[RMDB]
RNA sequence: GGGAACGACUCGAGUAGAGUCGAAAAACUGGUAGUUCGCUACCAGUAAUAUCGGGUCCGGUUCCCGACCUUCGAGCCAUUCGAAGGGUCGAUCCGGCGCCCACUCGUAAAUCCUUCGGGAUUUACGUCUUUAAUGCGCUUUCGAGCGCAUUAAAGAAAAAGAAACAACAACAACAAC
Reactivity to 2A3 in 0.01 (KOAc 150mM, MgCl2 10mM, bicine 150mM(pH8.5), 24C), signal-to-noise 1, nucleotides 027 to 126: a020c020u010g000g010u000a000g030u050u060c230g010c110u010a000c000c000a010g000u010a000a010u100a040u140c060g000g010g030u000c040c000g020g010u110u070c060c040c010g020a050c000c000u000u000c000g050a070g120c230c120a180u170u000c020g010a030a020g110g000g000u000c020g010a040u020c000c000g010g000c030g020c000c020c000a000c010u040c020g000u000a010a000a000u000c010c000u040u060c180g030g020g010a000u020u020u000a000c000g000
Reactivity to DMS in 0.01 (KOAc 150mM, MgCl2 10mM, bicine 150mM(pH8.5), 24C), signal-to-noise 2, nucleotides 027 to 126: a030c000u020g000g000u000a000g010u000u020c280g020c000u010a000c000c000a040g000u000a020a050u010a070u000c090g020g020g000u000c000c000g000g020u000u000c140c100c010g000a270c000c000u000u000c000g000a020g010c160c250a120u010u000c000g000a010a020g000g020g010u000c030g020a080u000c000c010g020g010c230g000c010c010c010a070c140u020c020g020u000a000a020a000u000c000c000u000u020c170g050g000g000a010u000u000u000a000c000g000

Background: Structure probing data (2A3 and DMS) for a 177-nucleotide construct. Conditions: 150 mM KOAc, 10 mM MgCl2 and 150 mM bicine (pH 8.5), 24 C. Source: RMDB library RFMREP, as collected in RNAgym. DMS adducts were read by reverse transcription with MarathonRT.